This 177-nucleotide RNA was probed chemically with 2A3 and DMS. For 2A3 the reverse transcriptase was SuperScript II with manganese.
[RMDB]
RNA sequence: GGGAACGACUCGAGUAGAGUCGAAAACACGGGUGGUUAUGCCAUUCCCUUCGGACUCUUUUGGCUCGCAAAUGAUACGUGGGUUCCAUCAUGUUUUAACCUUACUGGAGAGGAACUCCGGGCGUGGAGCAUAGUCAUAUUUCGAUAUGACUAUGCUAAAAGAAACAACAACAACAAC
Reactivity to 2A3 in 0.01 (KOAc 150mM, MgCl2 10mM, bicine 150mM(pH8.5), 24C), signal-to-noise 9, nucleotides 027 to 126: c090a040c040g030g000g020u050g010g070u150u110a090u270g050c010c020a040u090u100c010c000c000u040u070c040g060g020a040c010u010c020u050u060u080u110g060g020c040u030c060g030c040a040a080a120u140g050a050u060a100c040g020u130g030g030g000u050u020c020c000a050u050c020a020u070g060u020u050u020u100a050a060c020c010u030u150a070c020u080g040g020a030g020a090g090g070a080a040c010u010c010c000g000g020g010c040g060u100g050g060
Reactivity to DMS in 0.01 (KOAc 150mM, MgCl2 10mM, bicine 150mM(pH8.5), 24C), signal-to-noise 6, nucleotides 027 to 126: c100a060c180g000g000g020u000g010g000u010u020a050u040g010c090c040a120u000u000c010c010c020u000u020c070g030g010a080c060u000c010u000u010u010u010g020g000c020u020c050g000c110a070a090a080u030g000a090u020a080c080g010u010g000g000g010u000u010c010c010a080u010c050a090u020g000u000u000u000u000a070a140c060c040u010u020a080c060u000g010g000a070g010a150g020g010a070a060c010u000c000c000g000g000g000c080g000u020g000g000
About this RNA: It was measured as part of the RMDB library OK1LIB. For DMS, 19,499 sequencing reads were counted. In probing experiments dimethyl sulfate is read out at A N1 and C N3, which are open when not base-paired.